[RMDB]
RNA sequence: GGGAACGACUCGAGUAGAGUCGAAAAGCGGGCAAGUGCAACAGAAAGUAAACCGCCUAGAAUUUUUCUAGGUAAGGGUGAAACGGUGCGGUAAGAGCGCACCAGCGAGGUAGGUGACUACCUCGGCUUGGCACGAUUUAUUCGUAAAUCGUGCCAAAAAAGAAACAACAACAACAAC
Reactivity to DMS in 0.01 (KOAc 150mM, MgCl2 10mM, bicine 150mM(pH8.5), 24C), signal-to-noise 2, nucleotides 027 to 126: g000c060g000g020g020c130a060a070g030u000g000c100a140a110c140a030g000a010a000a040g010u020a070a030a000c010c000g000c000c030u000a000g010a020a060u020u030u090u030u000c000u000a000g020g010u000a000a030g000g000g000u010g000a080a010a020c280g000g000u000g030c010g000g000u000a010a040g000a280g000c000g010c000a000c000c000a050g020c100g000a000g000g000u000a000g020g000u090g000a250c000u010a000c000c000u010c000g000g000c050